RNA sequence: GGGAACGACUCGAGUAGAGUCGAAAAUCCAUGUCACACAUGGUAGUGCAGUACCGUGCGUACGUCUGGUACUCUCGCGAUCGUACGAGGAUCCACUAGUAUCAGUACGUAGUACACAGGAUCCAUGGUACUCCGCGAUGUUCGCAUCGCGGAGUACAAAAGAAACAACAACAACAAC
Reactivity to DMS in 0.01 (KOAc 150mM, MgCl2 10mM, bicine 150mM(pH8.5), 24C), signal-to-noise 2, nucleotides 027 to 126: u000c010c000a080u010g010u010c100a070c090a250c020a000u000g020g010u000a050g040u000g020c190a040g000u010a040c020c040g040u000g000c110g000u000a030c000g010u000c010u000g000g000u000a020c020u000c050u000c060g040c200g030a000u030c040g010u000a120c200g010a100g020g010a020u000c010c030a130c090u010a040g000u010a000u000c030a070g000u000a000c000g060u000a020g000u000a130c060a040c050a130g000g000a070u000c040c020a040u010g020
Reactivity to 2A3 in 0.01 (KOAc 150mM, MgCl2 10mM, bicine 150mM(pH8.5), 24C), signal-to-noise 2, nucleotides 027 to 126: u000c010c000a020u070g080u070c090a040c000a000c000a100u020g030g000u040a020g020u050g090c170a050g090u050a070c020c040g030u050g000c040g020u010a000c010g010u000c030u010g010g000u040a000c000u000c020u030c080g010c140g070a050u030c010g050u140a100c100g110a170g190g050a030u040c000c000a030c070u060a030g000u010a030u090c030a000g080u080a020c010g020u020a020g000u000a010c060a030c000a030g040g050a020u020c010c010a010u040g060